[RMDB]
RNA sequence: GGGAACGACUCGAGUAGAGUCGAAAAGAGCUCGACGAUGCAGGUUAGAUAUCGGAAGAGCUAUAAUUGACUGUAUGUCUGUGAAUGUGCUUCGAGAAGCACGGUACAGAGAUUACGGCUACCUGCAACUCACUUAGCCCUUCGGGGCUAAGUGAGUAAAAGAAACAACAACAACAAC
Reactivity to 2A3 in 0.01 (KOAc 150mM, MgCl2 10mM, bicine 150mM(pH8.5), 24C), signal-to-noise 1, nucleotides 027 to 126: g100a010g000c010u000c000g000a000c000g000a000u050g000c050a000g010g000u020u030a000g140a140u080a070u190c000g080g000a000a160g020a070g000c020u030a030u080a000a020u150u110g110a030c000u020g070u070a020u000g130u000c000u030g000u000g120a240a300u100g000u000g000c000u020u020c130g150a150g000a080a000g010c000a000c000g000g020u050a000c000a000g020a030g000a030u000u140a000c000g000g000c000u020a050c000c000u000g000c000a000
Reactivity to DMS in 0.01 (KOAc 150mM, MgCl2 10mM, bicine 150mM(pH8.5), 24C), signal-to-noise 1, nucleotides 027 to 126: g000a050g040c000u000c010g000a140c000g000a210u000g000c020a000g050g000u010u030a000g050a180u010a070u000c030g000g020a070a070g000a000g010c030u050a000u050a090a190u070u000g030a130c110u000g010u010a000u010g010u000c000u000g030u030g000a080a170u070g010u000g000c020u070u050c200g010a170g000a100a000g020c010a000c050g000g030u010a000c000a010g030a000g010a000u060u000a020c000g010g000c080u060a080c000c000u000g000c020a050
Structure probing data (2A3 and DMS) for a 177-nucleotide construct. The 2A3 profile rests on 754 reads. It was measured as part of the RMDB library OK1LIB. For DMS the reverse transcriptase was MarathonRT. Reactivities are rounded to 0.1 and cut off at 0 and 3. The reactions ran in a buffer of 150 mM KOAc, 10 mM MgCl2 and 150 mM bicine (pH 8.5), at 24 C.